Structure probing data (DMS and 2A3) for a 207-nucleotide construct. For DMS, 4,591 sequencing reads were counted. Values cover nucleotides 27 to 156.
RNA sequence: GGGAACGACUCGAGUAGAGUCGAAAAAAUCACAAGCAUUCUUAUACACCAAUAACAGACAAACAGAGAGCCGAAUCAUGAGUGAACUCCCAUUCACAAUUGCUUCAAAGAGAAAAAAAUACGUAGGAAUCCAACUUACAAGGUAUGUGAAGGACCAUAAUUACGUAUCAUUCGUGAUACGUAAUUAAAAAGAAACAACAACAACAAC
Reactivity to DMS in 0.01 (KOAc 150mM, MgCl2 10mM, bicine 150mM(pH8.5), 24C), signal-to-noise 3, nucleotides 027 to 156: a060a050u010c040a070c070a050a080g020c020a080u000u010c030u010u000a150u000a100c040a060c030c020a060a100u010a050a090c040a110g020a070c060a040a050a110c080a070g010a100g020a080g050c020c010g010a050a060u000c060a040u000g000a240g010u000g020a040a050c040u000c010c020c000a230u000u000c060a040c030a040a110u010u000g020c040u000u000c040a080a090a160g020a130g050a010a000a070a150a050a080a130u000a020c060g010u000a070g000g000a110a070u000c050c030a030a070c040u000u000a040c030a080a040g010g040u010a030u000g030u000g010a090a060g000g020a040c030c020a120
Reactivity to 2A3 in 0.01 (KOAc 150mM, MgCl2 10mM, bicine 150mM(pH8.5), 24C), signal-to-noise 4, nucleotides 027 to 156: a010a010u140c060a040c040a050a040g000c010a070u100u060c020u060u110a080u070a100c040a030c060c040a070a060u100a140a040c050a040g160a060c050a060a130a010c030a050g070a010g010a010g120c030c040g030a020a020u030c020a040u040g030a000g010u020g000a020a020c020u070c040c010c010a010u030u030c010a010c010a040a080u040u060g000c010u040u060c010a040a130a010g050a000g030a050a120a000a000a000a010a050u120a020c060g030u060a030g010g050a020a040u010c050c030a040a040c040u030u050a010c040a090a000g050g020u060a030u130g060u030g040a040a020g020g030a020c010c010a020